The record gives the reactivity of an RNA of 177 nucleotides to 2A3.
Source: RMDB library OK1LIB, as collected in RNAgym.

RNA sequence: GGGAACGACUCGAGUAGAGUCGAAAAGCAUGCUUCCUGACCUAGUUUUUGCAUGCGAAACGUCCGCUCUAGGUCAGCAUGUUUAGACGAGUUCGCUCGUCUCAUGCAUAGGAAUUGCGGACGGAAAGGGUACCAUCCACUUCGGUGGAUGGUACCCAAAAGAAACAACAACAACAAC
Reactivity to 2A3 in 0.01 (KOAc 150mM, MgCl2 10mM, bicine 150mM(pH8.5), 24C), signal-to-noise 1, nucleotides 027 to 126: g010c000a000u000g030c030u030u030c000c000u000g010a030c000c010u030a050g030u000u000u000u060u010g010c000a010u000g000c030g000a060a090a000c000g000u000c000c000g030c000u000c000u000a000g000g060u050c010a000g000c000a000u000g090u050u170u020a010g000a020c040g000a020g000u090u230c200g080c100u030c000g000u020c000u010c000a010u000g000c000a020u170a040g060g020a030a000u070u050g010c000g000g000a000c030g000g130a040a040a000